[RMDB]
RNA sequence: GGGAACGACUCGAGUAGAGUCGAAAAGAUAUGGAUGAAAGCUCGACGAUCAAUCGUAACAUCAAAUCGGAAACGAUUUGUGGAUUGGGAGAGCUGUCCUAAGUCAAAAGGUCCCUUCGGGGACCAAUCGGGUAUACAUGUUCGCAUGUAUACCCGAAAAAGAAACAACAACAACAAC
Reactivity to DMS in 0.01 (KOAc 150mM, MgCl2 10mM, bicine 150mM(pH8.5), 24C), signal-to-noise 3, nucleotides 027 to 126: g000a020u000a300u000g000g010a020u010g020a170a080a070g010c000u000c000g020a120c220g000a100u010c020a000a020u010c010g030u000a100a190c150a060u000c010a000a000a000u000c000g010g000a090a070a240c020g000a010u000u000u010g010u000g010g000a020u000u010g000g000g020a060g000a000g030c010u000g010u000c000c000u010a010a170g010u000c040a060a080a210a160g030g000u000c000c000c000u000u030c190g010g020g010g010a000c000c010a000a020
Reactivity to 2A3 in 0.01 (KOAc 150mM, MgCl2 10mM, bicine 150mM(pH8.5), 24C), signal-to-noise 1, nucleotides 027 to 126: g000a020u060a050u170g030g040a060u120g300a220a210a060g000c020u040c000g300a300c060g070a180u070c000a000a010u030c020g080u130a090a050c020a150u190c040a030a010a010u000c040g010g010a030a000a040c010g020a030u000u000u010g060u030g040g020a040u030u030g080g000g000a030g000a010g020c000u000g000u000c000c010u050a210a000g120u030c040a000a040a200a150g030g000u020c000c000c050u000u070c180g000g000g020g000a030c030c000a010a000